[RMDB]
RNA sequence: GGGAACGACUCGAGUAGAGUCGAAAAGAUAUGGAAUUGGCUUCUUUUGACGCGAAGCUUCGGAAACGAAAUUCGCGAUAAGAAGCAAUUCCUAAGUCAAAGCUAGGUCGCUUCGGCGACCUAGCAACGAAAUUACCUUCUUCGGAAGGUAAUUUCGAAAAGAAACAACAACAACAAC
Reactivity to 2A3 in 0.01 (KOAc 150mM, MgCl2 10mM, bicine 150mM(pH8.5), 24C), signal-to-noise 2, nucleotides 027 to 126: g010a000u000a010u070g000g010a020a020u030u040g300g100c000u040u000c040u080u240u160u300g250a120c020g010c030g000a000a010g070c000u020u030c010g000g000a020a000a000c000g000a000a040a030u000u000c000g010c020g110a170u110a260a020g000a000a010g000c030a000a000u000u000c000c010u010a020a010g000u040c030a100a120a020g000c000u020a010g020g010u030c010g040c030u070u180c300g170g010c000g010a000c010c000u000a000g000c000a000a000
Reactivity to DMS in 0.01 (KOAc 150mM, MgCl2 10mM, bicine 150mM(pH8.5), 24C), signal-to-noise 1, nucleotides 027 to 126: g000a000u000a180u010g000g000a000a000u000u000g020g010c010u000u000c000u010u000u000u000g010a220c050g000c000g000a020a020g000c270u000u000c000g000g000a050a050a090c010g020a010a000a120u000u000c010g020c000g020a120u000a000a010g010a010a000g010c000a010a000u000u000c000c000u010a030a070g000u010c000a050a120a120g000c010u000a000g000g010u000c020g010c000u000u000c180g030g020c000g000a000c000c000u000a000g020c010a000a030